Structure probing data (2A3 and DMS) for a 207-nucleotide construct. Reactivities are rounded to 0.1 and cut off at 0 and 3. For DMS the reverse transcriptase was MarathonRT. Conditions: 150 mM KOAc, 10 mM MgCl2 and 150 mM bicine (pH 8.5), 24 C.

RNA sequence: GGGAACGACUCGAGUAGAGUCGAAAAGCAGUAUUUGCUUAAGCCCAACUGAGGCUUGCUCGCUUUUAGUCCGACUCCGUUAACGGCUAAAACGAAACCCCAACGGAUGCACCUUUUAGUUACUUUCGGUUGACUAAUUGCGUAAAGACUUCACCGACUUAUCACAUAGCUUCGGCUAUGUGAUAAGAAAAGAAACAACAACAACAAC
Reactivity to 2A3 in 0.01 (KOAc 150mM, MgCl2 10mM, bicine 150mM(pH8.5), 24C), signal-to-noise 9, nucleotides 027 to 156: g000c020a010g050u260a270u170u250u130g030c000u060u040a030a020g020c000c000c010a060a110c190u180g050a110g060g010c010u030u050g030c030u060c070g050c030u020u020u000u000a010g010u000c030c000g020a020c030u010c010c010g020u020u060a050a030c010g000g000c010u010a030a020a000a030c080g100a140a080a070c050c040c020c040a040a000c000g010g000a010u020g000c010a020c000c000u000u010u010u020a010g000u020u040a040c020u080u080u030c000g010g000u030u050g010a000c000u000a020a010u010u040g050c100g040u020a020a010a030g100a100c060u130u060c200a020c020c000g040a040
Reactivity to DMS in 0.01 (KOAc 150mM, MgCl2 10mM, bicine 150mM(pH8.5), 24C), signal-to-noise 2, nucleotides 027 to 156: g030c030a090g000u000a050u010u020u000g030c030u000u000a090a090g040c010c000c010a120a110c130u000g010a070g000g010c030u000u020g000c080u000c020g000c040u000u030u000u000a020g000u000c010c170g000a170c090u000c120c080g020u000u010a100a180c140g010g010c010u000a020a020a060a100c030g010a110a080a130c010c020c010c040a090a090c100g010g000a050u010g030c010a050c040c020u030u000u010u000a020g020u000u000a030c090u000u010u010c080g000g000u010u000g020a020c010u000a010a000u010u000g010c040g030u000a090a110a110g030a060c010u000u000c070a170c050c030g020a220